[RMDB]
RNA sequence: GGGAACGACUCGAGUAGAGUCGAAAAUCCUAGGUCCGGAGUCGACCUCCAUCUGAUCCGUCCUGGCUCUCUUCGCCGGGGGAGCUCCCUCCCCGUCCUUGUCUUUUCUUAUUAUUCCUCGGACGUUAUGCCAGAACCUUCGGGUUCUGGAAAAGAAACAACAACAACAAC
Reactivity to 2A3 in 0.01 (KOAc 150mM, MgCl2 10mM, bicine 150mM(pH8.5), 24C), signal-to-noise 7, nucleotides 027 to 129: u000c020c000u000a040g000g010u060c090c070g020g010a010g040u030c020g030a070c010c000u010c050c010a110u040c060u080g050a060u010c010c020g010u020c020c040u020g000g000c010u020c000u010c040u170u140c050g020c060c010g010g010g000g000g010a030g010c030u080c000c000c000u020c000c020c000c000g040u020c010c000u020u050g060u060c040u030u080u050u030c030u090u100a180u080u040a100u130u080c010c010u050c020g010g010a010c030g060u130u050a080u110g030
Reactivity to DMS in 0.01 (KOAc 150mM, MgCl2 10mM, bicine 150mM(pH8.5), 24C), signal-to-noise 4, nucleotides 027 to 129: u010c000c010u010a030g000g030u030c030c070g020g030a070g060u020c010g020a000c060c030u030c030c030a140u050c060u010g040a120u030c000c060g060u040c040c070u040g000g000c070u030c000u000c070u050u030c140g040c110c000g000g000g000g000g000a060g030c000u020c050c040c020u010c020c030c030c040g000u000c030c080u000u010g030u030c040u140u010u020u020c050u000u040a110u040u030a110u070u040c040c030u040c000g040g020a040c050g020u000u050a130u130g000

Description:
The record gives the reactivity of an RNA of 170 nucleotides to 2A3 and DMS. For DMS, 18,354 sequencing reads were counted. Source: RMDB library 15KLIB, as collected in RNAgym. Values cover nucleotides 27 to 129. DMS adducts were read by reverse transcription with MarathonRT. For 2A3 the reverse transcriptase was SuperScript II with manganese.